[RMDB]
RNA sequence: GGGAACGACUCGAGUAGAGUCGAAAAGCUUUGGAGCACUGGAGCAGCUUUCUGCCCUGCAAGAGCUCAUCCAGAAGUGCCUCCUGCCCAGCAUCCGCGGCAGCAAGUGGCACAUCUACACCACGCCCUAAUUCUAGCCUUUCGAGGCUAGAAUUAGAAAAGAAACAACAACAACAAC
Reactivity to DMS in 0.01 (KOAc 150mM, MgCl2 10mM, bicine 150mM(pH8.5), 24C), signal-to-noise 4, nucleotides 027 to 126: g010c070u010u000u010g020g000a090g010c070a140c050u010g000g000a080g020c300a030g010c110u000u000u010c160u000g030c020c080c130u000g000c030a070a060g010a020g030c000u000c170a250u000c020c010a030g000a210a130g030u000g000c020c000u020c060c010u000g020c010c020c080a190g010c050a080u000c160c160g020c130g020g020c060a060g000c240a070a070g010u010g000g030c030a030c020a070u010c060u000a070c090a080c030c020a090c190g010c060c060
Reactivity to 2A3 in 0.01 (KOAc 150mM, MgCl2 10mM, bicine 150mM(pH8.5), 24C), signal-to-noise 3, nucleotides 027 to 126: g030c020u170u140u120g090g040a060g010c050a020c080u040g020g020a080g020c050a000g010c000u040u130u090c070u100g030c040c080c140u160g000c050a040a010g000a000g000c010u010c020a040u010c010c010a020g030a200a030g050u010g020c000c000u030c000c010u010g000c000c000c000a030g040c010a110u090c120c120g000c040g020g020c000a010g030c060a170a070g040u040g010g000c010a010c010a040u000c030u050a030c010a010c060c020a010c040g050c030c000

Background
Structure probing data (DMS and 2A3) for a 177-nucleotide construct. DMS adducts were read by reverse transcription with MarathonRT. 2A3 adducts were read by reverse transcription with SuperScript II with manganese. Reactivities are given for positions 27 through 126. The 2A3 profile rests on 3,021 reads.